[RMDB]
The data come from the RNA Mapping Database (RMDB), library OK1LIB. An RNA of 177 nucleotides, treated with 2A3 and DMS and read out base by base. Reactivities are given for positions 27 through 126. The RNA was probed in 150 mM KOAc, 10 mM MgCl2 and 150 mM bicine (pH 8.5) at 24 C. For DMS, 2,503 sequencing reads were counted.
RNA sequence: GGGAACGACUCGAGUAGAGUCGAAAACUCUUGCGGCCUUCAUGCCACGGCGGCCCCGAUAGCGCUCGAUCAGCGGCUCGACGUCGGCCACCUUCAAAUCGGUGGCCUGUAUCAGGGCGUCGACGGCCAGUCGUAGUGCGUUCGCGCACUACGACUGAAAAGAAACAACAACAACAAC
Reactivity to 2A3 in 0.01 (KOAc 150mM, MgCl2 10mM, bicine 150mM(pH8.5), 24C), signal-to-noise 3, nucleotides 027 to 126: c020u020c000u040u120g050c080g020g030c010c020u120u160c070a140u100g010c010c010a010c040g030g000c000g040g190c010c000c010c000g030a020u020a060g060c030g030c080u020c050g070a110u020c070a020g090c020g080g020c020u020c000g010a000c010g020u060c060g000g010c000c000a010c000c020u150u290c140a100a110a190u280c130g000g010u000g000g000c000c000u000g000u010a020u060c020a050g000g020g080c000g000u000c000g030a080c090g020g000c010
Reactivity to DMS in 0.01 (KOAc 150mM, MgCl2 10mM, bicine 150mM(pH8.5), 24C), signal-to-noise 2, nucleotides 027 to 126: c020u000c000u000u010g010c140g030g000c020c050u000u000c050a110u030g030c040c010a110c060g010g040c090g000g000c010c020c020c020g040a140u040a080g000c070g010c080u020c050g000a100u010c180a080g010c050g050g010c090u000c020g000a010c020g030u000c050g000g040c000c000a000c000c010u000u050c150a080a110a130u090c210g030g030u000g010g000c000c040u000g000u000a070u030c130a010g000g000g000c000g020u010c000g000a050c150g030g020c050